RNA sequence: GGGAACGACUCGAGUAGAGUCGAAAAUUUUGCGCCUGCCCGGAUCCGAAGGCGUGGAGAAGGCAGGAUCGCCAAGGGAACAUGCCUGGGUUCCCGAGGUUAAACCCUUACAGGCUCGCUGAUGACGGGUACGCCCCUCUUUCCCGUCGUUGGUCAGGAGGCUAUAAUAGUUCGCUAUUAUAGCCUCAAAAGAAACAACAACAACAAC
Reactivity to 2A3 in 0.01 (KOAc 150mM, MgCl2 10mM, bicine 150mM(pH8.5), 24C), signal-to-noise 3, nucleotides 027 to 156: u060u090u050u120g120c080g010c010c000u020g030c010c030c000g050g190a030u000c010c020g110a160a090g220g040c150g060u160g010g000a040g010a040a010g000g020c010a000g020g010a000u050c020g000c000c000a020a020g000g000g010a010a000c000a010u030g000c000c000u000g000g000g000u000u010c000c000c000g000a000g000g000u000u030a020a040a040c020c010c020u020u100a100c010a000g010g000c000u010c000g000c000u010g010a010u010g000a000c000g000g000g030u120a050c140g240c000c000c030c020u080c060u040u120u050c000c000c000g000u000c000g000u000u000g000g000u010c020a020g300